[RMDB]
The record gives the reactivity of an RNA of 177 nucleotides to DMS and 2A3.

RNA sequence: GGGAACGACUCGAGUAGAGUCGAAAAAGGCGCGAAACUUACCCAAUGAACGUUGAGGUAGUUACGAGGCGUAGUAUUAUGAAGUGUGUGUAAAGAGCAUACUGAAGUACUGGAGGGCAAGUCUGGUACAUAAUGUUUAUUUCGAUAAACAUUAUGUAAAAGAAACAACAACAACAAC
Reactivity to DMS in 0.01 (KOAc 150mM, MgCl2 10mM, bicine 150mM(pH8.5), 24C), signal-to-noise 9, nucleotides 027 to 126: a080g010g010c030g010c020g010a090a030a030c030u010u010a040c000c000c010a030a020u010g010a130a100c260g010u000u000g000a120g010g010u000a020g010u000u000a090c080g010a090g010g010c040g010u010a040g010u010a030u000u010a060u020g010a150a020g010u000g020u000g010u000g000u010a090a100a170g010a240g000c010a010u000a010c010u000g000a100a070g000u000a010c020u000g000g000a060g000g000g010c140a050a070g000u000c020u000g000g010u000
Reactivity to 2A3 in 0.01 (KOAc 150mM, MgCl2 10mM, bicine 150mM(pH8.5), 24C), signal-to-noise 9, nucleotides 027 to 126: a000g070g000c030g000c010g050a070a020a010c030u090u070a030c020c000c000a010a020u200g110a150a030c180g000u010u010g030a080g060g010u010a010g010u020u040a040c070g020a020g040g040c030g000u020a010g020u000a030u170u040a090u150g190a180a030g000u010g000u000g010u000g020u080a060a090a020g070a030g010c000a010u010a020c010u020g030a040a000g010u010a020c010u020g020g030a070g030g010g010c030a050a030g040u010c020u040g030g030u010
DMS (dimethyl sulfate) methylates the pairing face of unpaired adenines and cytosines.